RNA sequence: GGGAACGACUCGAGUAGAGUCGAAAAAGAUAUGGAUGUUGCUACCCACCCUACGUAACAGCUUGGAUUUAGACGUCGGAAACGACGUCUUGUCAGCUGGAUAAGUAGGAGGCAACAUCCUAAGUCACACAUCACAUCAGUUCGCUGAUGUGAUGUGAAAAGAAACAACAACAACAAC
Reactivity to DMS in 0.01 (KOAc 150mM, MgCl2 10mM, bicine 150mM(pH8.5), 24C), signal-to-noise 3, nucleotides 027 to 126: a090g030a140u000a160u010g010g010a020u010g020u000u000g000c010u000a170c130c030c060a300c050c010c010u010a000c000g000u000a250a300c000a000g000c020u030u040g000g010a020u000u000u000a010g010a020c000g010u010c000g010g000a100a070a190c000g020a000c000g000u000c000u000u000g010u000c020a040g020c000u000g010g000a060u010a040a130g000u020a000g000g020a110g000g000c000a000a000c000a000u000c000c000u000a010a070g010u020c130a200
Reactivity to 2A3 in 0.01 (KOAc 150mM, MgCl2 10mM, bicine 150mM(pH8.5), 24C), signal-to-noise 3, nucleotides 027 to 126: a000g280a170u300a130u300g020g000a010u010g000u090u000g010c000u180a300c090c010c010a030c000c010c000u000a000c020g010u010a020a030c000a000g000c000u140u270g230g000a050u300u140u120a020g010a000c000g000u000c000g010g050a070a090a030c010g010a000c000g000u000c000u000u010g000u010c000a010g000c000u000g020g000a020u020a000a010g030u000a010g020g000a000g000g000c000a000a000c010a000u000c000c000u010a000a000g040u020c010a020
Annotation:
This 177-nucleotide RNA was probed chemically with DMS and 2A3. For DMS the reverse transcriptase was MarathonRT. The data come from the RNA Mapping Database (RMDB), library TTRDES. For 2A3, 5,272 sequencing reads were counted. 2A3 adducts were read by reverse transcription with SuperScript II with manganese. The RNA was probed in 150 mM KOAc, 10 mM MgCl2 and 150 mM bicine (pH 8.5) at 24 C.